Structure probing data (2A3 and DMS) for a 177-nucleotide construct. Values cover nucleotides 27 to 126. The reactions ran in a buffer of 150 mM KOAc, 10 mM MgCl2 and 150 mM bicine (pH 8.5), at 24 C. For 2A3, 632 sequencing reads were counted.

RNA sequence: GGGAACGACUCGAGUAGAGUCGAAAAAAGCUAACUAAGUCUAACCUUAGUAGGAAGUAAGGUAGGCGUGUGAACUUCCGAACGGCAUGUGAUUGUGAAGGGCCGGAUCUAAUUUAGUACAUGGGAAUGCAUGGUACUCUUUCGAGAGUACCAUGCAAAAAGAAACAACAACAACAAC
Reactivity to 2A3 in 0.01 (KOAc 150mM, MgCl2 10mM, bicine 150mM(pH8.5), 24C), signal-to-noise 1, nucleotides 027 to 126: a000a020g040c000u040a020a040c000u000a300a000g080u000c000u000a060a040c030c000u010u000a000g110u100a020g000g070a090a000g000u040a000a040g140g070u000a080g050g010c000g020u090g030u000g000a040a040c000u000u000c000c000g000a000a000c000g090g000c000a000u030g110u140g070a150u160u180g000u070g080a060a050g020g000g000c000c000g000g000a000u050c030u170a000a030u010u150u180a000g030u000a000c000a080u100g000g000g030a040a040
Reactivity to DMS in 0.01 (KOAc 150mM, MgCl2 10mM, bicine 150mM(pH8.5), 24C), signal-to-noise 2, nucleotides 027 to 126: a100a070g000c000u010a210a030c020u030a120a110g030u000c080u000a060a200c080c000u020u000a050g000u000a100g050g010a220a110g000u020a000a050g000g010u030a000g020g000c040g060u000g060u030g010a060a160c000u000u000c020c020g000a020a060c060g000g030c000a050u040g000u020g000a040u000u020g000u000g030a160a060g000g000g020c000c010g010g030a100u000c080u000a000a110u000u000u020a080g010u010a010c050a020u000g000g010g000a080a200